[RMDB]
RNA sequence: GGGAACGACUCGAGUAGAGUCGAAAAUCCCAGAGGGAGGAACCACGCGGAGAUAAGCGGAGAAACCACCUCCAGAGGACCCCUUCAGCGAACAGAGGGCACUGCGCGAGCAGGAGUAAGAGCGUAGCCUUACGCAUAGGUUCGCCUAUGCGUAAGGAAAAGAAACAACAACAACAAC
Reactivity to DMS in 0.01 (KOAc 150mM, MgCl2 10mM, bicine 150mM(pH8.5), 24C), signal-to-noise 1, nucleotides 027 to 126: u000c000c000c000a160g010a050g000g000g050a150g000g090a070a110c080c110a140c030g070c070g010g000a100g010a170u000a060a110g000c050g080g000a170g010a080a120a070c010c010a160c100c000u020c030c070a080g000a070g000g000a080c090c020c030c000u000u000c070a060g000c100g000a050a030c040a140g050a080g000g000g030c080a130c010u000g000c000g020c180g000a170g000c010a010g000g000a070g020u000a040a070g000a240g030c030g030u000a010g000